This 177-nucleotide RNA was probed chemically with DMS. The data come from the RNA Mapping Database (RMDB), library OK2TRN. The RNA was probed in 150 mM KOAc, 10 mM MgCl2 and 150 mM bicine (pH 8.5) at 24 C. DMS adducts were read by reverse transcription with MarathonRT.

RNA sequence: GGGAACGACUCGAGUAGAGUCGAAAAUAGCAAAGGAGAGAGGAACGUCGAGGAGAAGCUCGGUUAAUUAGGUUGAGUACUUACCAGGUACGAAGUAAGUGGAUUAGCCGUGAAGUGUCGCGCAAAAUGAAGCAUGUGAGUUCGCUCACAUGCUUCAAAAAGAAACAACAACAACAAC
Reactivity to DMS in 0.01 (KOAc 150mM, MgCl2 10mM, bicine 150mM(pH8.5), 24C), signal-to-noise 2, nucleotides 027 to 126: u000a160g050c040a070a140a080g000g000a060g000a120g020a090g000g040a110a090c130g020u000c050g000a030g020g020a090g000a110a080g020c020u010c050g000g000u010u000a040a070u000u020a080g000g020u000u000g030a200g020u010a020c010u010u000a080c080c120a230g010g010u010a050c170g000a150a070g000u000a010a020g020u000g000g000a070u000u000a070g060c010c030g000u000g010a070a070g010u000g000u010c000g030c070g000c180a050a030a040a110